[RMDB]
RNA sequence: GGGAACGACUCGAGUAGAGUCGAAAAAGUGGUGGAUCUAGCUCAGUCGGGGUUCACCAAAGUAGUAGGCAUGAAGAGGCAUUAAAGCAAUCCUUCGCCCUGACUUCUUGGCUAAUAACUCUAUUGAGUCGAUAAAUUACUUCGGUAAUUUAUCGACAAAAGAAACAACAACAACAAC
Reactivity to 2A3 in 0.01 (KOAc 150mM, MgCl2 10mM, bicine 150mM(pH8.5), 24C), signal-to-noise 1, nucleotides 027 to 126: a000g170u060g040g010u020g000g000a040u000c010u040a050g070c010u050c300a040g150u300c100g060g020g010g010u000u000c000a000c000c000a000a000a050g000u010a010g010u000a020g000g000c110a060u300g040a050a020g060a010g120g000c030a040u110u190a150a090a000g020c020a010a120u060c030c000u000u020c010g030c030c010c000u010g070a010c000u060u000c000u060u040g050g020c000u030a070a050u130a300a050c010u070c010u040a160u100u180g070a050
Reactivity to DMS in 0.01 (KOAc 150mM, MgCl2 10mM, bicine 150mM(pH8.5), 24C), signal-to-noise 2, nucleotides 027 to 126: a060g030u000g030g020u000g000g000a040u000c030u000a130g060c050u020c210a100g000u000c030g040g010g000g010u000u000c050a000c000c020a040a030a050g000u010a130g010u010a120g020g000c070a050u010g030a030a030g000a120g000g000c030a090u000u000a180a100a100g000c040a070a050u010c070c030u000u000c060g010c120c000c050u000g000a050c040u000u000c010u000u000g030g000c050u040a040a080u030a020a100c030u000c030u010a120u010u000g000a300
Chemical mapping of a 177-nucleotide RNA with 2A3 and DMS. The RNA was probed in 150 mM KOAc, 10 mM MgCl2 and 150 mM bicine (pH 8.5) at 24 C. Source: RMDB library OK2TRN, as collected in RNAgym.